[RMDB]
RNA sequence: GGGAACGACUCGAGUAGAGUCGAAAAGGGCCAGCAGCACCGGAUGCAGGUCGUGGCCCAUCUCGGUGAGGCGGUACUCGUAGCGCGGCGGUCGCUCCUGGUAAGGCACCUUCUUCAGCGCGCCCGAGGAGUACGUACCUUUCGAGGUACGUACUCCAAAAGAAACAACAACAACAAC
Reactivity to 2A3 in 0.01 (KOAc 150mM, MgCl2 10mM, bicine 150mM(pH8.5), 24C), signal-to-noise 2, nucleotides 027 to 126: g020g010g020c010c030a040g040c050a010g010c000a060c030c020g030g000a050u110g090c190a120g080g000u060c070g110u110g060g000c000c040c000a020u020c060u030c010g000g040u080g000a040g060g010c020g060g040u040a160c030u020c070g040u090a110g010c000g010c000g070g000c040g030g000u040c050g010c040u050c020c020u060g080g060u150a070a060g020g010c030a060c030c000u070u040c030u070u100c060a060g000c010g000c010g010c030c000c000g080a050
Reactivity to DMS in 0.01 (KOAc 150mM, MgCl2 10mM, bicine 150mM(pH8.5), 24C), signal-to-noise 1, nucleotides 027 to 126: g030g020g000c000c010a090g000c060a030g020c020a020c010c020g010g000a140u000g020c160a160g050g010u000c070g020u000g010g000c010c020c000a000u000c000u010c010g050g000u000g000a150g010g000c010g000g010u010a060c050u000c030g010u010a090g000c010g030c030g020g030c190g020g000u010c060g010c060u000c040c010u000g010g000u030a110a080g020g010c020a110c070c010u010u010c090u000u020c000a090g030c050g020c120g000c010c060c020g000a110